[RMDB]
RNA sequence: GGGAACGACUCGAGUAGAGUCGAAAAAAAGUCAGUGUGGCGUUUUCAUGAGCGGAAAUUGUACACUGUUCCAUAAAACAAUUGUUACACUCUUUAUGAGAGAACGAUCACCUAAUGGUUCAAACAUUCGUCACGCUGUAUUCGUACAGCGUGACGAAAAAGAAACAACAACAACAAC
Reactivity to 2A3 in 0.01 (KOAc 150mM, MgCl2 10mM, bicine 150mM(pH8.5), 24C), signal-to-noise 2, nucleotides 027 to 126: a000a020a010g080u050c000a000g000u000g000u000g040g050c060g030u000u000u000u000c070a070u250g190a040g040c170g080g090a000a000a000u290u170g050u030a030c000a000c000u010g040u060u000c000c000a150u110a060a040a000a000c130a040a070u050u040g110u030u110a000c080a000c000u020c020u080u150u240a220u170g000a000g000a000g010a050a020c020g000a100u000c000a100c090c050u070a070a050u100g130g000u000u060c030a100a080a030c060a030u000